Description: Structure probing data (DMS and 2A3) for a 177-nucleotide construct. The 2A3 profile rests on 3,323 reads. It was measured as part of the RMDB library OK2TST. The RNA was probed in 150 mM KOAc, 10 mM MgCl2 and 150 mM bicine (pH 8.5) at 24 C.
RNA sequence: GGGAACGACUCGAGUAGAGUCGAAAAAAUAACAGCUGCAGGGCCUCUAAGUACCCAGUCCUUUAAUAGAGCUUCAUUGUCCUCAACAUAAUCAUUCGUCUAUCUCCUCAUACCUUGACCGGUUGGCGUAACCGAUCAUAUUCGUAUGAUCGGUUACAAAAGAAACAACAACAACAAC
Reactivity to DMS in 0.01 (KOAc 150mM, MgCl2 10mM, bicine 150mM(pH8.5), 24C), signal-to-noise 4, nucleotides 027 to 126: a060a080u000a040a100c060a050g020c040u000g030c070a090g020g000g020c030c030u000c050u010a040a060g020u010a110c060c030c020a120g000u000c040c010u010u000u010a050a070u000a090g000a080g000c040u000u000c080a030u000u000g010u000c030c020u000c060a040a060c110a060u000a040a040u010c070a080u000u000c060g020u000c040u000a070u000c070u000c020c030u000c050a060u000a060c040c040u000u010g020a110c130c070g000g010u010u000g010g000c140
Reactivity to 2A3 in 0.01 (KOAc 150mM, MgCl2 10mM, bicine 150mM(pH8.5), 24C), signal-to-noise 3, nucleotides 027 to 126: a010a000u130a040a020c030a030g030c020u080g020c040a040g000g020g060c020c000u020c010u040a090a010g050u050a060c000c000c020a010g070u060c040c000u060u080u050a140a100u140a050g080a020g010c010u070u040c030a070u040u100g040u040c000c010u050c010a030a040c030a050u130a130a040u050c020a030u070u070c020g030u020c060u040a100u030c030u000c030c000u030c010a020u050a120c000c000u040u040g020a040c020c030g040g030u040u060g000g010c040